[RMDB]
RNA sequence: GGGAACGACUCGAGUAGAGUCGAAAAGAUAUGGAGCGUACGCAAGCGAUAAGCGUAUGAUCGGAAACGAUCAUUACGCUUUUGACGCUUGAAACGCUCCUAAGUCAAAGCCAUGUUCGCAUGGCAAGUCAUGAUAUUAGUUCGCUAAUAUCAUGACAAAAGAAACAACAACAACAAC
Reactivity to 2A3 in 0.01 (KOAc 150mM, MgCl2 10mM, bicine 150mM(pH8.5), 24C), signal-to-noise 7, nucleotides 027 to 126: g040a010u070a040u140g000g000a000g000c010g010u020a030c270g010c050a010a000g010c010g070a080u030a190a010g000c010g010u000a010u010g000a000u000c010g020g010a060a060a030c020g000a000u010c000a000u070u160a000c000g000c000u020u000u010u030g020a010c010g000c000u000u000g010a020a010a000c000g000c000u000c000c000u000a020a010g010u010c050a090a070a030g000c000c000a010u010g030u050u100c270g010c200a000u000g010g000c020a000a010
Reactivity to DMS in 0.01 (KOAc 150mM, MgCl2 10mM, bicine 150mM(pH8.5), 24C), signal-to-noise 9, nucleotides 027 to 126: g010a050u000a300u010g000g010a010g020c000g020u000a060c300g000c010a010a010g010c000g020a140u000a010a010g010c000g020u000a010u000g000a000u000c000g010g000a080a090a180c010g010a010u000c000a010u010u010a010c000g010c000u000u000u000u000g010a210c120g010c000u000u000g000a020a030a010c000g010c000u000c000c000u000a010a070g000u000c040a130a130a160g010c000c000a010u000g000u000u020c230g030c010a010u000g010g000c010a040a050